Record summary
The record gives the reactivity of an RNA of 207 nucleotides to DMS and 2A3. In probing experiments dimethyl sulfate is read out at A N1 and C N3, which are open when not base-paired. 2A3 adducts were read by reverse transcription with SuperScript II with manganese. The data come from the RNA Mapping Database (RMDB), library OK3TST. DMS adducts were read by reverse transcription with MarathonRT.

[RMDB]
RNA sequence: GGGAACGACUCGAGUAGAGUCGAAAAGAAGAAAAGUAUAGUUGUGCUGUAGUGGGUAGGGUGAGGAAAAUAAGGGUCAUCACCAGCAAAGUCAGAGUGAUGAAAAAACUGGAUUACAACACUCUGCUUGACUUUGCAUAGAUAAGUAAGCCAAGCAAAAUCAAUUGAUCUUCGGAUCAAUUGAUUUAAAAGAAACAACAACAACAAC
Reactivity to DMS in 0.01 (KOAc 150mM, MgCl2 10mM, bicine 150mM(pH8.5), 24C), signal-to-noise 2, nucleotides 027 to 156: g020a110a140g000a070a070a100a100g030u000a100u000a110g000u000u010g010u000g030c060u000g020u000a060g030u000g000g010g010u010a070g010g000g010u000g000a080g010g000a060a030a060a120u010a060a080g000g000g010u000c030a050u010c050a060c030c040a300g000c030a030a020a100g010u000c010a070g010a050g050u010g000a080u010g000a000a070a060a050a060a100c100u000g000g000a220u020u010a080c030a040a080c030a010c010u000c050u000g030c080u000u000g030a000c000u000u000u010g040c020a100u000a100g020a140u010a050a120g000u000a040a050g000c030c000a010a070g030c120a090
Reactivity to 2A3 in 0.01 (KOAc 150mM, MgCl2 10mM, bicine 150mM(pH8.5), 24C), signal-to-noise 4, nucleotides 027 to 156: g050a030a010g030a010a090a000a000g050u080a080u170a190g030u020u040g030u030g020c050u030g020u100a060g010u060g060g000g030u050a060g020g010g010u040g030a060g030g050a070a070a020a040u160a050a030g030g010g000u020c010a020u020c010a060c060c010a010g000c010a010a030a000g020u010c010a000g010a010g010u000g050a130u090g000a080a050a010a000a000a030c120u150g030g030a080u120u110a030c030a080a010c000a020c000u010c010u030g050c040u050u040g000a010c000u010u000u030g000c020a000u030a020g060a040u050a030a070g090u020a040a020g030c030c050a040a000g060c030a060